About this RNA:
Conditions: 150 mM KOAc, 10 mM MgCl2 and 150 mM bicine (pH 8.5), 24 C. The record gives the reactivity of an RNA of 177 nucleotides to 2A3 and DMS. For 2A3 the reverse transcriptase was SuperScript II with manganese. For DMS, 1,979 sequencing reads were counted. Source: RMDB library OK1LIB, as collected in RNAgym.
RNA sequence: GGGAACGACUCGAGUAGAGUCGAAAACUGAGCAUCCACAUCCUCUGUUUGUGGUAGCAGAGAGCGGCUUCGGCACCGGAUUAAACUUCCUGACGCUAUGGCAGGCAUUUGAUCAGUUUCGCGAAGCGAUUAUAGCCGCCUUCGGGCGGCUAUAAUCAAAAGAAACAACAACAACAAC
Reactivity to 2A3 in 0.01 (KOAc 150mM, MgCl2 10mM, bicine 150mM(pH8.5), 24C), signal-to-noise 5, nucleotides 027 to 126: c030u060g020a010g050c010a070u040c010c020a030c020a060u060c000c050u100c070u070g070u130u110u060g100u070g050g080u070a030g050c020a030g060a010g000a010g120c050g010g000c020u040u050c030g000g030c040a030c040c010g030g000a010u040u020a020a040a070c050u070u040c010c010u020g030a060c030g040c140u160a130u210g090g000c000a020g010g000c010a020u000u020u070g010a050u040c020a010g010u020u070u060c090g010c010g090a040a000g040c030
Reactivity to DMS in 0.01 (KOAc 150mM, MgCl2 10mM, bicine 150mM(pH8.5), 24C), signal-to-noise 2, nucleotides 027 to 126: c060u000g040a080g000c020a140u000c010c010a070c110a080u070c080c100u000c030u000g000u000u000u010g000u030g000g000u000a110g000c000a010g020a100g000a300g020c100g050g010c030u000u000c090g000g000c110a060c050c000g000g020a030u020u010a070a030a030c150u000u030c020c000u020g010a080c050g000c210u050a070u020g000g000c020a000g010g000c300a240u000u000u000g030a000u020c020a230g000u000u020u000c030g000c010g030a080a080g000c110